The data come from the RNA Mapping Database (RMDB), library OK1LIB. An RNA of 177 nucleotides, treated with DMS and 2A3 and read out base by base. For 2A3 the reverse transcriptase was SuperScript II with manganese.
RNA sequence: GGGAACGACUCGAGUAGAGUCGAAAAUACGCCUGAUGGCGAACGUGCGCAAGAUAAGAAUGGUCGUAUAAAAAGACACCGCAAACGAUCAGACGGAAGAGCGCACGCGCGGUGUCUUAACACCAGACACUAGUGACUCCUUCGGGAGUCACUAGUGAAAAGAAACAACAACAACAAC
Reactivity to DMS in 0.01 (KOAc 150mM, MgCl2 10mM, bicine 150mM(pH8.5), 24C), signal-to-noise 1, nucleotides 027 to 126: u090a150c090g010c000c000u040g000a070u130g000g000c040g000a170a120c020g050u000g000c010g000c100a130a160g000a020u000a150a090g000a080a120u000g000g000u000c100g100u010a060u100a070a020a050a060a010g020a000c010a000c060c000g000c000a070a050a030c090g000a180u000c000a000g000a130c030g000g000a120a060g000a140g000c000g000c030a000c000g000c240g160c000g000g000u000g040u030c050u020u000a050a190c230a120c020c070a110g070a290
Reactivity to 2A3 in 0.01 (KOAc 150mM, MgCl2 10mM, bicine 150mM(pH8.5), 24C), signal-to-noise 3, nucleotides 027 to 126: u120a000c010g010c010c010u290g150a270u300g060g040c050g030a060a010c020g010u020g000c000g000c000a070a040g030a220u110a130a140g030a100a040u050g000g000u010c000g010u070a050u110a150a140a010a000a000g000a000c010a000c000c020g000c060a050a130a030c020g010a000u010c000a020g110a080c020g140g050a010a050g030a030g010c000g050c000a010c010g000c010g010c000g000g000u000g000u000c000u010u020a030a010c030a020c100c000a010g010a100
Conditions: 150 mM KOAc, 10 mM MgCl2 and 150 mM bicine (pH 8.5), 24 C.
For DMS the reverse transcriptase was MarathonRT.